[RMDB]
Conditions: 150 mM KOAc, 10 mM MgCl2 and 150 mM bicine (pH 8.5), 24 C. Chemical mapping of a 177-nucleotide RNA with DMS and 2A3. 2A3 adducts were read by reverse transcription with SuperScript II with manganese.

RNA sequence: GGGAACGACUCGAGUAGAGUCGAAAAUACUUCCAUUGUCAUGUGUAUGUUGGGGAUUAAACCCUGAUUGAGUUCAGCCCACAUACUUUGUUGAUUGGUUGUCAAUCAUGGCAAAAGUGCACGCUACGUCUUUGUAGUUGUUCGCAACUACAAAGACAAAAGAAACAACAACAACAAC
Reactivity to DMS in 0.01 (KOAc 150mM, MgCl2 10mM, bicine 150mM(pH8.5), 24C), signal-to-noise 2, nucleotides 027 to 126: u010a120c210u000u000c020c010a270u010u000g000u000c010a010u000g000u010g020u010a000u000g000u030u000g040g000g000g010a140u000u010a080a090a120c140c240c000u000g010a020u000u000g030a190g000u000u010c020a050g020c000c010c000a000c000a010u000a000c000u000u000u000g000u010u000g000a030u000u010g010g030u010u000g010u000c010a010a010u010c000a040u010g030g010c010a000a030a080a140g010u000g000c100a070c170g020c070u000a040c180
Reactivity to 2A3 in 0.01 (KOAc 150mM, MgCl2 10mM, bicine 150mM(pH8.5), 24C), signal-to-noise 1, nucleotides 027 to 126: u080a020c080u050u000c030c020a070u050u040g010u010c000a000u020g030u010g010u020a010u010g070u070u110g070g000g000g060a040u030u300a090a090a040c000c050c000u010g040a010u030u120g090a150g300u000u000c000a040g050c010c000c030a010c000a000u000a010c000u150u070u080g030u030u010g010a030u020u090g220g080u070u070g000u030c000a020a000u000c010a000u000g000g000c000a000a000a020a020g140u100g040c070a030c070g080c100u160a040c150